The data come from the RNA Mapping Database (RMDB), library OK3TST.
Chemical mapping of a 207-nucleotide RNA with DMS and 2A3.
As a SHAPE reagent, 2A3 marks flexible, mostly unpaired nucleotides at the ribose 2'-OH.
DMS adducts were read by reverse transcription with MarathonRT.
For 2A3, 2,614 sequencing reads were counted.
The reactions ran in a buffer of 150 mM KOAc, 10 mM MgCl2 and 150 mM bicine (pH 8.5), at 24 C.

[RMDB]
RNA sequence: GGGAACGACUCGAGUAGAGUCGAAAAGGCGAUCGAGAGGCCCUCUCAUUAAUGCGGAGGUGUCACGCUGACAGAAUGAUAUUAGAUGUCCGCUUCCGGUUACAUCGCGGCGAUGAUUACAUAGGACAUCGAUUACCCAUUGGCUUCGGGGAAGCAACGGUACGUAUCAUUUCGAUGAUACGUACCGAAAAGAAACAACAACAACAAC
Reactivity to DMS in 0.01 (KOAc 150mM, MgCl2 10mM, bicine 150mM(pH8.5), 24C), signal-to-noise 2, nucleotides 027 to 156: g010g040c020g000a110u020c040g020a130g020a190g050g020c000c010c000u010c080u000c060a230u000u000a060a120u010g020c150g000g000a100g020g010u000g010u000c020a080c060g010c030u000g010a160c050a120g000a110a080u000g000a150u000a110u000u000a090g010a100u000g010u000c000c000g020c100u000u000c040c040g010g030u010u000a100c050a030u010c030g100c060g000g040c080g030a060u010g010a120u000u010a080c070a140u020a130g020g010a030c000a020u000c010g010a070u000u010a070c020c000c060a260u010u000g010g000c070u000u000c040g040g000g030g010a090a090g020c010a020a150
Reactivity to 2A3 in 0.01 (KOAc 150mM, MgCl2 10mM, bicine 150mM(pH8.5), 24C), signal-to-noise 5, nucleotides 027 to 156: g050g000c030g060a090u060c090g050a050g050a080g160g040c000c020c000u000c000u000c000a100u130u300a210a120u190g090c100g020g000a010g010g020u150g010u080c040a040c040g010c050u010g020a020c020a070g190a160a120u120g030a040u040a070u170u140a060g010a020u010g000u000c000c020g010c020u110u020c040c020g030g000u050u010a030c020a070u020c030g010c100g190g030c120g050a040u020g030a050u020u130a060c060a110u110a090g010g000a000c000a000u000c000g000a000u000u070a050c020c000c020a030u050u120g100g010c010u040u020c070g060g000g030g000a000a040g000c030a050a020